[RMDB]
RNA sequence: GGGAACGACUCGAGUAGAGUCGAAAAGAUAUGGACGUGGAACUACAAUCCGAAGACCGCAGAUACCUCCUAAGAUCGGAAACGAUCUUAGGAGGUGUAGGUCUAAGGAUUGCCACGUCCUAAGUCAGGUAAUACAACGGUUCGCCGUUGUAUUACCAAAAGAAACAACAACAACAAC
Reactivity to DMS in 0.01 (KOAc 150mM, MgCl2 10mM, bicine 150mM(pH8.5), 24C), signal-to-noise 3, nucleotides 027 to 126: g000a040u000a300u010g010g000a010c010g040u000g000g010a080a010c130u030a300c040a000a000u000c000c000g000a300a040g000a010c000c010g030c260a100g020a170u020a050c000c000u000c010c000u000a010a000g000a010u000c000g000g000a080a020a120c020g020a010u000c000u000u000a000g000g000a000g000g010u000g010u030a040g010g030u010c000u020a040a300g000g020a010u000u000g020c000c000a000c000g010u010c000c000u000a000a050g020u000c010a160
Reactivity to 2A3 in 0.01 (KOAc 150mM, MgCl2 10mM, bicine 150mM(pH8.5), 24C), signal-to-noise 2, nucleotides 027 to 126: g010a000u080a020u060g020g010a000c010g000u010g010g010a030a060c160u220a040c300a000a020u000c000c010g000a050a010g010a000c000c010g020c050a030g050a300u300a110c000c000u010c010c010u010a000a000g000a000u000c010g000g020a010a010a000c000g000a010u030c000u010u000a000g000g010a000g010g000u000g000u070a000g000g010u000c000u000a010a000g020g000a010u000u000g000c010c000a000c000g000u000c000c010u000a000a000g010u000c030a060
The record gives the reactivity of an RNA of 177 nucleotides to DMS and 2A3. The 2A3 profile rests on 4,381 reads. Conditions: 150 mM KOAc, 10 mM MgCl2 and 150 mM bicine (pH 8.5), 24 C. It was measured as part of the RMDB library TTRINS. For 2A3 the reverse transcriptase was SuperScript II with manganese.